[RMDB]
RNA sequence: GGGAACGACUCGAGUAGAGUCGAAAACUGGAUACCUUCGGGUAUCCAGAAAGGCCGAGUAGUGUUGGGUCGCGAAAGGCCAUAAAUAAACUAUCACUCAGAAAAGCCAUAGCUUCGGCUAUGGCAAGUAAACUAAGGGAUUCGUCCCUUAGUUUACAAAAGAAACAACAACAACAAC
Reactivity to 2A3 in 0.01 (KOAc 150mM, MgCl2 10mM, bicine 150mM(pH8.5), 24C), signal-to-noise 3, nucleotides 027 to 126: c000u000g000g000a000u000a010c010c000u020u050c120g120g010g000u010a010u020c010c000a000g000a010a040a010g010g000c000c000g000a000g000u020a010g000u000g130u120u100g130g050g010u200c040g000c000g020a020a010a000g000g010c000c000a000u010a010a000a000u020a000a020a010c000u020a040u300c080a020c070u030c020a020g150a100a150a070a000g010c010c000a010u000a010g000c010u080u060c300g080g000c000u010a000u020g000g000c000a000a000
Reactivity to DMS in 0.01 (KOAc 150mM, MgCl2 10mM, bicine 150mM(pH8.5), 24C), signal-to-noise 5, nucleotides 027 to 126: c000u000g000g010a010u000a000c000c000u000u020c210g020g010g040u000a000u000c000c000a010g010a010a070a100g000g020c010c010g010a060g010u010a080g000u010g020u010u010g010g000g010u000c020g010c020g000a130a160a180g000g000c010c000a040u000a020a030a050u000a040a080a100c090u000a050u010c110a050c030u000c040a090g020a090a090a120a140g000c000c000a000u000a000g020c010u000u010c220g030g000c000u000a000u010g000g010c010a000a010